[RMDB]
RNA sequence: GGGAACGACUCGAGUAGAGUCGAAAAUGCAGCGCUGGUGACCUCGUUCAUCACCUGGCUGUUGAGCGCGUUCAGUGCCUGGGGACGGUUCAGCGUGAUAAUGCCAACUCGCUGAUCGCGCUCGACCUGAUUAUGCACAAUUCGUUGUGCAUAAUCAAAAAGAAACAACAACAACAAC
Reactivity to 2A3 in 0.01 (KOAc 150mM, MgCl2 10mM, bicine 150mM(pH8.5), 24C), signal-to-noise 9, nucleotides 027 to 126: u150g000c000a000g010c170g030c210u040g000g000u010g010a020c010c080u110c120g100u180u090c060a030u010c000a020c010c000u020g040g010c010u000g000u030u120g000a000g000c000g000c000g010u010u010c010a010g010u020g090c040c080u090g010g000g010g060a040c060g060g000u130u130c080a070g080c060g100u100g070a140u120a300a070u220g090c010c010a030a050c030u030c050g000c000u000g000a000u000c000g000c000g010c000u000c000g000a010c000c010
Reactivity to DMS in 0.01 (KOAc 150mM, MgCl2 10mM, bicine 150mM(pH8.5), 24C), signal-to-noise 9, nucleotides 027 to 126: u010g010c010a010g010c020g010c050u000g010g010u000g000a020c100c100u000c170g000u000u010c120a280u000c000a010c010c010u000g010g010c010u000g020u000u010g000a020g010c000g020c020g010u000u000c010a010g010u000g010c260c090u000g000g010g000g000a100c090g010g000u000u010c090a120g010c120g020u000g000a090u010a100a090u010g010c020c040a060a090c080u000c040g010c000u000g000a010u000c010g010c010g000c000u000c000g000a060c040c050